[RMDB]
RNA sequence: GGGAACGACUCGAGUAGAGUCGAAAAAAUAAUUGUCGAAACUCGUUUCGCGUUGGCUGCCUAAUUCAAGGAAUUAGCGUGCCUUCAUGCUAAGGGUUUGAUAUCUGCUAAAACCCGGUGCAUUCAUAAGACUUUUGCUUGUUCGCAAGCAAAAGAACGACAAUAAAAGGUUCGCCUUUUAUUGUCGAAAAGAAACAACAACAACAAC
Reactivity to DMS in 0.01 (KOAc 150mM, MgCl2 10mM, bicine 150mM(pH8.5), 24C), signal-to-noise 2, nucleotides 027 to 156: a060a060u000a060a080u000u010g020u000c010g000a050a060a070c100u010c070g030u000u010u010c000g020c060g010u010u000g010g000c000u000g000c180c010u000a020a020u000u000c030a190a130g040g020a040a010u000u000a000g020c060g010u010g000c020c000u000u010c000a080u020g010c020u010a300a240g010g000g010u000u000u000g020a190u000a060u000c100u000g010c120u000a140a010a020a020c000c010c020g000g010u000g020c000a070u010u000c070a100u010a070a150g020a120c010u010u000u010u000g010c020u000u010g010u000u000c300g000c000a030a000g010c010a010a010a020a020g000a050a130
Reactivity to 2A3 in 0.01 (KOAc 150mM, MgCl2 10mM, bicine 150mM(pH8.5), 24C), signal-to-noise 4, nucleotides 027 to 156: a000a010u300a050a090u180u180g050u040c020g010a050a020a070c040u030c060g010u020u000u020c040g020c020g010u030u030g010g000c040u090g020c020c050u020a020a020u040u020c160a250a140g220g020a060a020u000u000a010g010c040g070u030g010c000c000u000u030c030a030u020g000c010u020a000a030g000g000g020u020u000u000g010a010u050a100u110c140u130g070c040u060a040a010a010a010c000c000c000g010g030u040g010c020a030u030u130c030a020u080a180a120g080a150c000u000u020u010u000g000c010u010u000g010u030u030c090g000c120a000a000g020c000a000a000a010a000g010a000a010
An RNA of 207 nucleotides, treated with DMS and 2A3 and read out base by base.
DMS (dimethyl sulfate) methylates the pairing face of unpaired adenines and cytosines.
The RNA was probed in 150 mM KOAc, 10 mM MgCl2 and 150 mM bicine (pH 8.5) at 24 C.
Values cover nucleotides 27 to 156.
The DMS profile rests on 4,721 reads.